[RMDB]
RNA sequence: GGGAACGACUCGAGUAGAGUCGAAAAAUCCGGCCGAAGGGUUGAGAUGACCCACAGUCGGGUGAUCCACCAGGAGGGUGGAGGAGAGACCACCUCCAGAGGACCCCUUCAGCGAACAGAAGAGCUCACGGCAAUGCCUUCGGGCAUUGCAAAAGAAACAACAACAACAAC
Reactivity to DMS in 0.01 (KOAc 150mM, MgCl2 10mM, bicine 150mM(pH8.5), 24C), signal-to-noise 6, nucleotides 027 to 129: a020u020c020c010g030g080c060c040g020a170a060g060g030g020u020u040g020a180g030a130u080g030a080c030c020c000a050c210a000g030u040c070g080g020g000u020g000a080u050c050c020a230c120c070a180g030g010a070g020g030g030u050g030g030a030g040g020a160g000a170g030a110c010c060a050c060c010u000c000c000a100g010a130g040g020a140c140c040c000c000u040u020c070a130g020c020g030a070a050c090a100g000a100a060g060a000g010c020u020c080a090c140g020
Reactivity to 2A3 in 0.01 (KOAc 150mM, MgCl2 10mM, bicine 150mM(pH8.5), 24C), signal-to-noise 4, nucleotides 027 to 129: a000u040c000c000g000g000c010c000g090a170a090g070g030g000u040u040g090a110g000a110u220g090a020c000c020c000a050c040a040g100u070c050g020g000g010u000g040a050u000c040c000a040c000c030a060g070g000a010g040g060g030u060g000g030a020g030g030a110g000a020g030a030c000c000a030c000c020u000c000c010a000g030a070g030g000a020c000c000c000c000u020u000c000a030g030c000g020a020a020c030a050g090a110a010g010a030g010c010u020c010a050c020g050

This 170-nucleotide RNA was probed chemically with DMS and 2A3. Source: RMDB library 15KLIB, as collected in RNAgym. For DMS the reverse transcriptase was MarathonRT.